[RMDB]
RNA sequence: GGGAACGACUCGAGUAGAGUCGAAAAACUAUUUGUUCUAUAGCAAAUAAACCCGAAACACAGGAUAUAUUUGUUAUAUAUGCUUUGUGGCACACAGCUGUUAGGACUUGAGCCAUCAGGGUCCAAACGUAUUAGGCGGAUUCGUCCGCCUAAUACGAAAAGAAACAACAACAACAAC
Reactivity to 2A3 in 0.01 (KOAc 150mM, MgCl2 10mM, bicine 150mM(pH8.5), 24C), signal-to-noise 4, nucleotides 027 to 126: a000c040u020a040u010u020u020g040u040u060c170u160a190u240a110g010c000a000a000a000u020a010a040a030c030c000c030g040a100a090a000c040a000c000a030g010g010a010u010a020u000a010u040u060u100g130u300u030a020u000a000u010a000u090g140c020u100u050u120g020u020g030g040c000a020c000a000c030a090g080c010u020g030u230u140a060g010g040a020c010u010u070g050a020g030c020c000a060u040c050a020g000g000g070u000c000c000a050a120a000
Reactivity to DMS in 0.01 (KOAc 150mM, MgCl2 10mM, bicine 150mM(pH8.5), 24C), signal-to-noise 2, nucleotides 027 to 126: a100c150u000a000u020u000u000g010u010u000c240u030a200u010a070g000c000a040a000a010u000a010a120a080c030c000c030g010a090a140a110c020a020c050a030g000g000a030u000a000u000a010u000u020u010g010u010u000a060u000a010u030a040u010g030c010u020u000u000g050u000g000g020c100a090c090a050c180a110g020c080u030g000u000u060a070g000g020a000c050u020u010g030a070g000c100c080a130u020c040a120g000g010g000u020c000c010a020a020a110

Structure probing data (2A3 and DMS) for a 177-nucleotide construct. Conditions: 150 mM KOAc, 10 mM MgCl2 and 150 mM bicine (pH 8.5), 24 C. For 2A3 the reverse transcriptase was SuperScript II with manganese. The 2A3 profile rests on 1,717 reads.